[RMDB]
RNA sequence: GGGAACGACUCGAGUAGAGUCGAAAAGGCAAGGAGCAGCGCGUGGCCAUGGGUGUUGGAUUCGCCACGUCGAAGGGCUAUGUGCAGACUGGUGACUACUGCGUUGUGAUUCACGCUGAUCACAAGGCGAUCGCCAAGCAUUCGUGCUUGGCGAUCGAAAAGAAACAACAACAACAAC
Reactivity to 2A3 in 0.01 (KOAc 150mM, MgCl2 10mM, bicine 150mM(pH8.5), 24C), signal-to-noise 1, nucleotides 027 to 126: g040g000c020a050a030g050g000a020g070c010a010g000c020g000c000g000u040g000g020c000c020a070u100g040g040g010u110g070u150u150g120g000a120u090u110c060g060c070c000a020c090g080u060c090g040a080a100g050g010g000c000u050a070u110g010u060g000c040a000g040a060c010u040g060g000u000g000a040c000u020a030c050u160g030c000g100u000u010g020u070g020a060u100u070c070a000c110g070c160u080g020a020u000c000a030c010a050a010g100g020
Reactivity to DMS in 0.01 (KOAc 150mM, MgCl2 10mM, bicine 150mM(pH8.5), 24C), signal-to-noise 2, nucleotides 027 to 126: g020g000c080a060a060g030g000a040g000c120a060g020c040g010c020g030u000g000g010c020c060a110u010g000g020g000u000g000u030u030g010g010a250u010u010c250g010c000c000a010c090g000u000c040g000a110a110g020g000g010c020u000a070u010g020u000g040c010a020g010a080c070u000g000g010u000g000a100c050u000a090c110u000g010c020g040u010u000g020u000g010a040u000u000c130a130c170g010c180u020g000a060u010c000a010c030a040a040g010g040

This 177-nucleotide RNA was probed chemically with 2A3 and DMS. For DMS, 1,417 sequencing reads were counted. In probing experiments dimethyl sulfate is read out at A N1 and C N3, which are open when not base-paired. The reactions ran in a buffer of 150 mM KOAc, 10 mM MgCl2 and 150 mM bicine (pH 8.5), at 24 C.